[RMDB]
RNA sequence: GGGAACGACUCGAGUAGAGUCGAAAAGCCUCAUCAACGCCGCUCGCUUUCCUGAGGUGGUCGUGUUUCACUGGACAAGACGAGCAGCGCGUCACACGCGGCGUGUGGCGGCGGCAGAGGCGGCCGCCAUGGAUCACCGGUUCGCCGGUGAUCCAUGAAAAGAAACAACAACAACAAC
Reactivity to DMS in 0.01 (KOAc 150mM, MgCl2 10mM, bicine 150mM(pH8.5), 24C), signal-to-noise 4, nucleotides 027 to 126: g010c000c000u000c040a160u010c140a120a250c040g010c010c040g020c000u000c010g020c000u000u010u000c000c040u010g010a110g010g020u000g000g020u020c140g020u040g000u020u010u020c030a080c040u000g010g000a050c300a010a030g000a130c030g000a020g020c020a080g010c020g000c030g010u010c020a020c040a030c030g020c090g010g000c070g040u010g000u000g000g000c030g020g020c030g000g020c090a100g010a060g000g000c010g010g010c010c000g010c040
Reactivity to 2A3 in 0.01 (KOAc 150mM, MgCl2 10mM, bicine 150mM(pH8.5), 24C), signal-to-noise 6, nucleotides 027 to 126: g010c010c010u040c030a150u130c050a060a070c100g030c040c020g020c010u030c000g010c000u030u010u030c010c030u140g130a170g100g110u040g010g050u080c110g060u030g110u130u090u100c040a030c030u100g010g020a040c050a160a050g050a150c000g000a010g000c010a020g000c030g000c010g030u020c000a020c000a000c010g080c050g190g000c080g030u030g010u010g030g000c050g250g140c010g030g000c040a050g000a020g040g040c000g000g000c000c010g000c020

Overview: An RNA of 177 nucleotides, treated with DMS and 2A3 and read out base by base. Values cover nucleotides 27 to 126. The reactions ran in a buffer of 150 mM KOAc, 10 mM MgCl2 and 150 mM bicine (pH 8.5), at 24 C. The DMS profile rests on 9,266 reads.